[RMDB]
RNA sequence: GGGAACGACUCGAGUAGAGUCGAAAAAAAAGAUAUGGAGUAUGUGGAGCUGUGCGUCUCGAAGAACUUUCUCGGAAACGAGAAAGGGAGAGACGCCACAGCGAUGAAACAUACUCCUAAGUCAAAACUCUUAGUUAUCCUUCGGGAUAACUAAGAGAAAAGAAACAACAACAACAAC
Reactivity to DMS in 0.01 (KOAc 150mM, MgCl2 10mM, bicine 150mM(pH8.5), 24C), signal-to-noise 1, nucleotides 027 to 126: a120a050a170a100g000a040u010a300u000g000g010a000g010u000a000u020g000u010g000g010a060g010c010u000g000u020g010c020g000u000c000u000c000g030a090a190g030a090a180c000u010u000u000c010u000c000g000g010a110a070a140c000g000a000g000a020a020a030g000g000g000a120g000a010g010a020c000g000c150c040a000c000a000g010c000g000a050u020g030a140a200a000c000a020u000a000c000u000c000c010u000a010a010g020u000c030a050a080a100a100